[RMDB]
RNA sequence: GGGAACGACUCGAGUAGAGUCGAAAAGUCCACCGUUCGCGGUGGACAAAAAGGGGUCGUCUAAGACAGGACAUGCAGGGUACUGAAGCCUCCACGGUAUUACUGCAACAGCUCGAGACGACGGAGGCACCCAAAAAGGACGGUUUCGACCGUCCAAGUUGGGUGUUAACUUCGGUUAACACCCAACAAAAGAAACAACAACAACAAC
Reactivity to 2A3 in 0.01 (KOAc 150mM, MgCl2 10mM, bicine 150mM(pH8.5), 24C), signal-to-noise 2, nucleotides 027 to 156: g000u000c010c000a000c000c020g010u060u020c300g000c060g150g000u010g010g000a000c000a000a060a000a010a000g060g040g000g010u000c010g000u000c020u080a080a060g040a100c120a170g220g120a060c030a130u080g030c020a010g000g000g000u000a000c020u000g040a170a010g010c010c000u000c030c000a020c000g000g020u020a010u030u080a300c000u000g030c010a200a160c060a080g040c040u030c050g060a040g000a020c010g010a000c030g010g000a010g000g000c000a020c000c000c000a030a070a020a000a000g010g000a000c000g030g000u060u130u220c170g080a040c030c000g010u000c000c000a010a000
About this RNA:
The record gives the reactivity of an RNA of 207 nucleotides to 2A3. For 2A3, 1,195 sequencing reads were counted. Reactivities are given for positions 27 through 156.